An RNA of 177 nucleotides, treated with DMS and 2A3 and read out base by base. For DMS the reverse transcriptase was MarathonRT. For DMS, 12,969 sequencing reads were counted. Source: RMDB library OK1LIB, as collected in RNAgym.
RNA sequence: GGGAACGACUCGAGUAGAGUCGAAAAGACACACUUAGCAGAUGACCUCCUCGUUGGUGCGUGUCGGUAAUGUUGUCAGUCACAGGCAACAGUUAACGAUCUGCAUAAAUAAAAAGAGAAGAACAAAAUUAUAGCGCUAUUUCGAUAGCGCUAUAAUAAAAGAAACAACAACAACAAC
Reactivity to DMS in 0.01 (KOAc 150mM, MgCl2 10mM, bicine 150mM(pH8.5), 24C), signal-to-noise 5, nucleotides 027 to 126: g010a020c050a010c010a050c040u000u040a120g010c020a020g000a000u000g000a060c010c000u000c030c000u020c080g000u040u010g020g020u010g010c050g000u010g020u000c000g000g000u010a110a090u010g000u000u000g020u000c000a070g020u030c250a130c240a150g000g000c000a000a010c010a020g000u020u010a010a010c020g000a010u000c040u000g000c020a070u050a060a090a070u060a010a080a070a100a070g010a110g010a060a110g000a050a070c130a030a080a060
Reactivity to 2A3 in 0.01 (KOAc 150mM, MgCl2 10mM, bicine 150mM(pH8.5), 24C), signal-to-noise 8, nucleotides 027 to 126: g010a000c010a000c010a010c030u100u150a010g000c010a010g010a070u020g030a050c000c000u060c010c010u120c050g140u090u170g030g010u020g010c060g010u020g010u020c000g000g010u080a060a050u020g000u000u010g010u020c020a030g150u170c070a050c030a140g020g000c000a000a000c000a010g030u020u050a010a000c010g000a010u000c000u020g000c000a010u110a010a070a000u060a000a040a020a030a000g130a010g040a110a040g040a080a030c040a080a140a050